[RMDB]
RNA sequence: GGGAACGACUCGAGUAGAGUCGAAAAGAUAUGGACCCAGGCAACAGCCAUGGAUCGGAAACGAUCCCAUGGACAUGCCUGGUCCUAAGUCAAAAUCCCAAUAAGGCCUUCGGGCCUUAUUGGGAAACAUAAGUUGACAGUUCGCUGUCAACUUAUGAAAAGAAACAACAACAACAAC
Reactivity to DMS in 0.01 (KOAc 150mM, MgCl2 10mM, bicine 150mM(pH8.5), 24C), signal-to-noise 6, nucleotides 027 to 126: g010a030u010a280u010g010g000a010c110c090c100a010g010g010c000a040a060c270a150g010c010c000a000u000g010g000a020u000c000g010g000a060a070a130c000g000a000u000c110c060c020a000u000g000g000a100c080a160u000g000c000c000u000g010g000u000c000c000u000a030a090g010u010c020a090a090a110a160u000c010c000c010a010a000u000a010a000g000g010c000c000u000u010c230g030g010g030c000c000u000u000a000u000u000g000g000g010a000a010a060
Reactivity to 2A3 in 0.01 (KOAc 150mM, MgCl2 10mM, bicine 150mM(pH8.5), 24C), signal-to-noise 4, nucleotides 027 to 126: g010a020u040a040u080g000g000a010c060c090c130a000g000g000c000a060a100c040a300g080c020c010a000u010g010g000a000u000c010g000g020a060a040a010c020g000a000u040c070c000c010a000u010g010g040a090c010a060u040g000c000c000u000g010g000u000c000c000u010a080a010g010u010c010a020a010a010a300u040c000c000c010a000a000u000a000a000g000g000c020c020u050u220c300g080g010g000c000c000u000u000a000u000u000g000g000g000a000a000a000